Description
This 207-nucleotide RNA was probed chemically with DMS and 2A3. The DMS profile rests on 3,995 reads. The data come from the RNA Mapping Database (RMDB), library OK3TST. 2A3 is a SHAPE reagent: it acylates the 2'-hydroxyl of flexible nucleotides of all four kinds. The RNA was probed in 150 mM KOAc, 10 mM MgCl2 and 150 mM bicine (pH 8.5) at 24 C.
[RMDB]
RNA sequence: GGGAACGACUCGAGUAGAGUCGAAAACGCCAUCCAUUUCAUAAUACAACUGAACAUCGUCAUUUGAGGCAUAUGGCAUGUAUUAGUUCCGUAUUAGCCCUAGGAGUGUCUAUCUGUUUGGAAUAUCGCCUGCCAUAGUCGGGAUCGAACGAGAUAAUCUAAUAAAUCUCUUCGGAGAUUUAUUAGAAAAAGAAACAACAACAACAAC
Reactivity to DMS in 0.01 (KOAc 150mM, MgCl2 10mM, bicine 150mM(pH8.5), 24C), signal-to-noise 2, nucleotides 027 to 156: c070g040c030c030a080u000c020c010a150u000u000u010c060a160u000a040a090u000a080c060a090a080c040u030g010a060a040c080a040u000c130g020u000c010a030u000u020u000g010a140g020g020c030a130u000a020u010g010g000c010a050u000g020u000a100u000u000a050g010u000u000c080c070g010u000a080u000u000a060g000c030c010c000u000a100g020g020a090g010u000g010u000c060u010a060u010c070u000g000u000u010u010g000g000a060a060u000a080u000c010g000c020c020u000g020c020c040a080u010a070g020u010c040g020g000g000a070u010c050g010a080a070c040g010a110g030a070u020a090a240
Reactivity to 2A3 in 0.01 (KOAc 150mM, MgCl2 10mM, bicine 150mM(pH8.5), 24C), signal-to-noise 3, nucleotides 027 to 156: c060g050c020c010a060u020c030c010a090u070u120u140c070a050u100a190a020u070a040c050a060a020c060u040g020a030a020c010a040u020c060g030u000c020a050u020u040u170g140a080g070g000c050a080u020a010u070g010g000c000a000u020g010u050a280u080u030a030g020u050u000c080c020g020u020a020u060u080a030g020c010c020c060u040a060g030g040a070g040u070g040u060c040u050a140u040c020u030g080u100u100u100g010g010a050a040u080a040u140c020g000c000c010u020g040c010c020a070u070a040g040u110c040g000g020g020a000u070c030g030a040a040c020g010a000g000a090u060a120a070